RNA sequence: GGGAACGACUCGAGUAGAGUCGAAAAAUGAAGCAAGGUCAAUAGGCAUCCUCCUCCAGGAUCCCGGCUACCAAGACAGAAAAAAAUGGCACGCAAGUGUAUCGUUCCAAACGAAAUCCAAGAGUCAAGAUGAUGUAGAGUUCGCUCUACAUCAUCUAAAAGAAACAACAACAACAAC
Reactivity to DMS in 0.01 (KOAc 150mM, MgCl2 10mM, bicine 150mM(pH8.5), 24C), signal-to-noise 3, nucleotides 027 to 126: a090u010g030a070a130g010c070a080a050g010g000u000c050a060a060u000a090g000g000c070a100u000c040c020u010c070c050u010c060c030a080g000g020a080u000c060c040c030g030g000c070u000a060c050c040a070a090g020a070c080a080g010a000a010a050a090a060a110a070u000g010g020c040a010c060g020c130a060a100g010u010g010u000a040u000c020g010u000u000c080c050a060a050a090c140g000a040a040a060u010c060c050a030a120g010a100g020u000c070a060
Reactivity to 2A3 in 0.01 (KOAc 150mM, MgCl2 10mM, bicine 150mM(pH8.5), 24C), signal-to-noise 1, nucleotides 027 to 126: a000u090g020a070a000g030c050a000a080g060g010u050c040a070a060u060a200g020g030c010a020u000c010c000u030c000c020u010c020c000a010g080g000a010u010c020c000c000g010g030c010u060a060c000c000a020a000g030a070c030a020g200a040a150a000a010a000a000a000u050g040g010c020a000c030g070c020a090a090g010u020g000u050a090u070c000g010u060u060c020c000a100a030a010c050g050a070a000a030u010c020c010a060a020g030a010g160u050c060a080